[RMDB]
RNA sequence: GGGAACGACUCGAGUAGAGUCGAAAACAGAACGUUGAGACUUGUUACUGAAGCUAAAUCUGAUGCUAGCGCUUCGUCAAUAAGUGAUUGCAAACAAUGGAUUUUGAAAGUUUGAUUGACAAGUACACCACCAAUUCAGGUUCGCCUGAAUUGGUGGAAAAGAAACAACAACAACAAC
Reactivity to DMS in 0.01 (KOAc 150mM, MgCl2 10mM, bicine 150mM(pH8.5), 24C), signal-to-noise 1, nucleotides 027 to 126: c030a140g040a150a150c300g040u000u000g020a100g010a050c000u020u000g070u000u000a040c090u000g000a060a010g000c000u000a010a040a020u000c020u000g020a130u010g010c030u000a080g000c040g000c040u000u000c130g020u000c220a090a090u020a010a030g010u000g030a000u010u000g000c000a060a010a060c140a120a190u010g000g010a050u000u010u000u000g000a050a080a040g040u000u000u010g020a070u000u000g000a020c010a060a020g020u000a080c150a220
Reactivity to 2A3 in 0.01 (KOAc 150mM, MgCl2 10mM, bicine 150mM(pH8.5), 24C), signal-to-noise 1, nucleotides 027 to 126: c030a010g130a140a000c060g030u150u220g060a040g030a110c010u000u000g070u070u040a030c000u060g020a000a010g000c030u010a040a020a000u050c040u030g010a030u020g030c020u010a060g010c010g030c020u040u000c080g300u110c030a050a100u080a150a010g000u000g020a050u040u080g030c000a030a030a030c030a040a100u220g060g000a040u020u030u050u170g150a120a120a000g010u000u060u000g020a090u020u010g040a010c000a000a040g020u020a020c010a010